[RMDB]
RNA sequence: GGGAACGACUCGAGUAGAGUCGAAAAUGCUUAUCGCUUCGGCGAUAAGCACAAAAGAUAUGGAGCUUCGGGAGCACGAGGAUCUCAAGUCGGAAACGACUUGAGGGGAGUGUCGAAGCUCCUAAGUCAAGAUUCUUGUCAAUUCGUUGACAAGAAAGGUUAAUCUAACCUUCGGGUUAGAUUAACCAAAAGAAACAACAACAACAAC
Reactivity to 2A3 in 0.01 (KOAc 150mM, MgCl2 10mM, bicine 150mM(pH8.5), 24C), signal-to-noise 2, nucleotides 027 to 156: u060g000c010u000u000a020u000c000g000c050u060u080c260g100g000c000g020a000u000a000a000g070c000a000c010a000a070a000a060g010a000u000a000u020g000g020a000g000c010u010u010c030g060g100g130a270g110c010a000c000g090a220g030g020a010u030c000u010c000a000a000g000u020c000g000g000a000a010a000c000g010a010c000u000u020g000a000g000g020g060g020a010g000u080g130u220c000g010a000a000g000c000u000c000c000u020a000a000g030u000c000a000a050g060a140u060u000c000u000u020g000u000c000a010a020u040u070c240g060u160u000g000a000c000a000a000g030a030a050a000
The record gives the reactivity of an RNA of 207 nucleotides to 2A3. Source: RMDB library RNAMAK, as collected in RNAgym. Values cover nucleotides 27 to 156. The 2A3 profile rests on 1,737 reads. Conditions: 150 mM KOAc, 10 mM MgCl2 and 150 mM bicine (pH 8.5), 24 C.